[RMDB]
RNA sequence: GGGAACGACUCGAGUAGAGUCGAAAAAGCAUGCAAGCGACAGAGCAUGCGAAAGGAUGGAAUGGCAUACCUGUGCAUGUGGUGUGACUCAGGUGAGGCACUCGUAUACGGAGCUUAAGACUCGGAUGGGAAAGCAUGCACUGCUAAUCUUAGUCCGCAGCUUGUUACUAUUCGUAGUAACAAGCUGAAAAGAAACAACAACAACAAC
Reactivity to DMS in 0.01 (KOAc 150mM, MgCl2 10mM, bicine 150mM(pH8.5), 24C), signal-to-noise 2, nucleotides 027 to 156: a300g020c000a010u000g000c010a150a050g040c080g010a140c070a200g000a220g000c010a020u010g020c000g000a050a040a050g000g080a040u010g010g000a140a120u020g000g010c070a150u010a060c070c080u000g040u020g010c020a040u000g060u000g000g030u000g020u000g000a070c030u000c010a170g010g000u020g000a070g040g010c000a040c020u010c060g060u000a090u000a110c060g000g020a080g040c060u000u000a070a140g000a070c040u000c000g000g000a090u000g000g000g040a060a080a180g000c000a070u000g000c050a060c000u010g000c020u010a060a060u000c050u000u000a060g010u000c020c080g020
Reactivity to 2A3 in 0.01 (KOAc 150mM, MgCl2 10mM, bicine 150mM(pH8.5), 24C), signal-to-noise 4, nucleotides 027 to 156: a000g000c020a020u020g000c040a070a140g090c080g090a020c070a070g120a010g020c000a000u000g000c000g020a100a060a020g030g000a030u080g000g020a040a110u090g000g000c010a070u050a150c040c060u040g030u010g000c000a020u020g000u030g020g070u010g030u020g090a030c000u010c020a050g210g100u210g130a030g000g000c020a010c020u030c050g040u080a030u020a090c090g110g010a010g020c040u140u150a110a000g060a110c000u000c050g120g050a040u030g050g020g040a040a040a000g010c010a000u040g000c000a000c020u040g020c020u040a030a070u030c030u060u090a020g060u000c000c010g030
Conditions: 150 mM KOAc, 10 mM MgCl2 and 150 mM bicine (pH 8.5), 24 C. The record gives the reactivity of an RNA of 207 nucleotides to DMS and 2A3. The 2A3 profile rests on 2,604 reads. Source: RMDB library OK3TST, as collected in RNAgym. Reactivities are given for positions 27 through 156.